[RMDB]
RNA sequence: GGGAACGACUCGAGUAGAGUCGAAAAGCUGUGACGACCAGUGCUUGGGCCCUCCAGUGCGUUGACUGCUCUUUGAAUCAAGUGCCAGAUGCCAGUCAGUAGAGUCAUUUCCUGGACAACACUCUGGCUAUUAGAGUUGCUUCGGCAACUCUAAUAGAAAAGAAACAACAACAACAAC
Reactivity to 2A3 in 0.01 (KOAc 150mM, MgCl2 10mM, bicine 150mM(pH8.5), 24C), signal-to-noise 2, nucleotides 027 to 126: g010c030u070g050u050g030a020c020g050a060c030c030a020g020u030g120c040u090u100g030g050g020c020c060c000u030c010c010a020g020u030g100c020g040u070u080g050a050c020u010g000c010u000c020u060u110u110g100a060a070u130c040a110a070g080u030g140c050c010a040g000a060u060g010c040c000a020g000u050c030a010g000u030a040g030a020g040u040c030a010u010u060u070c000c000u010g030g020a020c020a040a010c010a030c000u040c010u010g060g010
Reactivity to DMS in 0.01 (KOAc 150mM, MgCl2 10mM, bicine 150mM(pH8.5), 24C), signal-to-noise 5, nucleotides 027 to 126: g010c040u010g020u010g000a100c090g000a090c070c040a060g020u000g020c060u000u000g020g010g000c030c040c030u010c030c050a060g020u000g010c070g010u010u000g020a080c050u000g010c030u000c040u000u000u010g000a100a090u000c110a070a090g000u010g010c040c040a050g000a090u010g020c070c030a050g000u000c060a060g000u000a070g000a270g000u000c060a060u000u000u000c020c010u010g010g000a040c030a040a110c090a060c120u000c030u000g000g000
Conditions: 150 mM KOAc, 10 mM MgCl2 and 150 mM bicine (pH 8.5), 24 C. This 177-nucleotide RNA was probed chemically with 2A3 and DMS. The 2A3 profile rests on 1,667 reads.